The data come from the RNA Mapping Database (RMDB), library M2RFPK. This 207-nucleotide RNA was probed chemically with 2A3.
RNA sequence: GGGAACGACUCGAGUAGAGUCGAAAACGGCAAAAAAGCAAACUUGACCACCAAGGAUAAAAGAGAUCUUAUCCAAGGAUGCAAAAGAUAAUCUCACUUUUGACACCCACUGAUCUCGAACUUAAAGAAAACCGAGACUACUUCGGUAGUCUCGGAACGCAAUACUACGCUUCGGCGUAGUAUUGCGAAAAGAAACAACAACAACAAC
Reactivity to 2A3 in 0.01 (KOAc 150mM, MgCl2 10mM, bicine 150mM(pH8.5), 24C), signal-to-noise 1, nucleotides 027 to 156: c110g070g000c130a090a090a000a070a140a000g080c160a210a050a050c070u070u030g030a130c030c020a030c000c000a070a000g030g000a040u110a090a050a090a040g010a000g000a000u030c030u070u070a010u070c010c030a000a030g010g000a010u010g000c040a000a000a000a000g050a040u130a150a170u250c040u040c110a050c050u000u050u000u000g120a170c010a040c050c000c000a030c070u050g000a010u010c000u000c000g030a130a090c010u140u300a140a080a030g110a130a090a030a000c000c000g000a000g000a000c000u000a000c000u090u130c190g040g000u000a000g030u000c010u030c000g000g000a000a000

The reactions ran in a buffer of 150 mM KOAc, 10 mM MgCl2 and 150 mM bicine (pH 8.5), at 24 C. 2A3 adducts were read by reverse transcription with SuperScript II with manganese.